This 177-nucleotide RNA was probed chemically with 2A3 and DMS.
DMS adducts were read by reverse transcription with MarathonRT.
It was measured as part of the RMDB library OK1LIB.
Values cover nucleotides 27 to 126.
[RMDB]
RNA sequence: GGGAACGACUCGAGUAGAGUCGAAAACAACUGAUCGAUACCCCUCCGGGAACGUCGGAUGAACAUAUAUCGAUUGCAGAGGAGCUGAGAUAUUCCAAACCAGAUGGUGGUAUUGUAGUAACUACCCCGGUAUACCGGUCUUCGGACCGGUAUACCGAAAAGAAACAACAACAACAAC
Reactivity to 2A3 in 0.01 (KOAc 150mM, MgCl2 10mM, bicine 150mM(pH8.5), 24C), signal-to-noise 6, nucleotides 027 to 126: c050a010a020c010u120g070a110u150c010g000a000u020a030c010c010c000c000u000c010c020g030g020g050a120a100c070g180u100c080g040g030a040u110g190a170a020c130a060u220a010u030a040u080c020g040a050u050u200g010c020a010g060a120g250g140a080g030c000u020g030a020g000a090u030a020u070u000c010c020a020a070a090c000c000a030g040a080u180g080g060u160g010g000u010a030u010u030g010u020a020g020u020a030a040c040u120a100c020c000c010
Reactivity to DMS in 0.01 (KOAc 150mM, MgCl2 10mM, bicine 150mM(pH8.5), 24C), signal-to-noise 2, nucleotides 027 to 126: c150a100a030c050u000g070a080u020c040g000a000u000a010c050c000c000c020u000c000c010g000g020g030a150a030c140g030u040c080g050g000a040u060g000a090a130c190a170u080a050u000a000u000c000g000a200u010u020g030c010a140g000a140g030g020a070g010c010u040g010a080g000a030u000a040u000u010c050c020a040a200a200c020c020a040g000a030u000g000g000u060g000g000u020a000u000u000g000u050a040g010u000a010a090c080u080a120c010c000c040